[RMDB]
An RNA of 177 nucleotides, treated with 2A3 and DMS and read out base by base.
RNA sequence: GGGAACGACUCGAGUAGAGUCGAAAAUCGAGAGUCGGAUUGGUGAUCAGACGAACAUCGCCACCGCCGGGUGCCCAGGUGUCGUAUACGCCACCAAAGAACAUGGCCUUGAAGACCAGGAGCAAACAGAAUGCGUUCGAUUCGUCGAACGCAUUCUAAAAGAAACAACAACAACAAC
Reactivity to 2A3 in 0.01 (KOAc 150mM, MgCl2 10mM, bicine 150mM(pH8.5), 24C), signal-to-noise 1, nucleotides 027 to 126: u080c020g010a040g040a030g160u060c000g020g070a050u010u040g020g030u080g000a050u060c070a050g080a190c000g020a050a010c010a020u010c000g010c030c000a030c000c000g040c050c060g000g000g020u070g000c010c010c000a000g000g000u010g000u010c040g000u130a060u030a060c040g000c000c000a000c000c000a000a000a160g020a000a000c010a080u110g030g000c000c000u030u060g030a020a010g020a100c010c010a040g000g080a100g060c100a080a010a070c010
Reactivity to DMS in 0.01 (KOAc 150mM, MgCl2 10mM, bicine 150mM(pH8.5), 24C), signal-to-noise 1, nucleotides 027 to 126: u010c050g000a110g010a070g100u060c040g020g010a040u010u000g020g000u040g010a150u000c050a230g000a130c090g020a090a040c190a050u000c000g000c000c010a000c000c070g000c080c090g000g020g010u000g020c070c000c080a020g010g050u000g000u010c000g020u000a070u080a110c000g000c080c000a070c090c050a030a020a090g000a090a130c050a140u000g000g020c000c020u000u000g000a150a190g000a130c000c030a060g000g000a110g030c050a070a130a050c230
For 2A3 the reverse transcriptase was SuperScript II with manganese.
For 2A3, 1,113 sequencing reads were counted.
Reactivities are given for positions 27 through 126.
The data come from the RNA Mapping Database (RMDB), library RFM100.
The RNA was probed in 150 mM KOAc, 10 mM MgCl2 and 150 mM bicine (pH 8.5) at 24 C.
For DMS the reverse transcriptase was MarathonRT.